[RMDB]
RNA sequence: GGGAACGACUCGAGUAGAGUCGAAAAGAUAUGGACCUGAUAUGGAGCUCAGUACUCGGAAACGAGUAUGAGCUAUGAAGUAUAGGUCCUAAGUCAAAACCAACGCAAUGUUCGCAUUGCGUUGGAAGUUCUAACAACUCUUCGGAGUUGUUAGAACAAAAGAAACAACAACAACAAC
Reactivity to DMS in 0.01 (KOAc 150mM, MgCl2 10mM, bicine 150mM(pH8.5), 24C), signal-to-noise 3, nucleotides 027 to 126: g000a020u010a020u030g000g020a020c000c010u000g000a050u000a020u300g000g000a020g010c000u000c000a030g030u010a000c010u000c010g000g000a010a000a030c000g020a020g010u000a010u000g000a010g040c000u010a140u010g010a120a280g000u000a010u000a020g000g000u000c000c010u000a000a070g000u000c000a070a070a190a280c000c000a000a010c010g020c010a010a010u000g010u000u010c270g000c000a020u000u010g010c000g000u010u010g000g000a000a030
Reactivity to 2A3 in 0.01 (KOAc 150mM, MgCl2 10mM, bicine 150mM(pH8.5), 24C), signal-to-noise 3, nucleotides 027 to 126: g010a000u010a000u030g000g000a000c010c000u030g060a030u070a030u010g050g010a010g010c010u010c010a130g300u030a020c010u010c000g020g000a030a010a000c000g000a020g010u010a020u010g000a000g010c000u050a280u020g010a010a000g040u000a020u050a070g010g000u000c000c000u000a010a000g020u010c010a030a040a100a180c000c000a000a000c010g000c000a010a000u020g020u050u120c290g020c180a000u000u020g010c020g000u000u000g000g010a010a020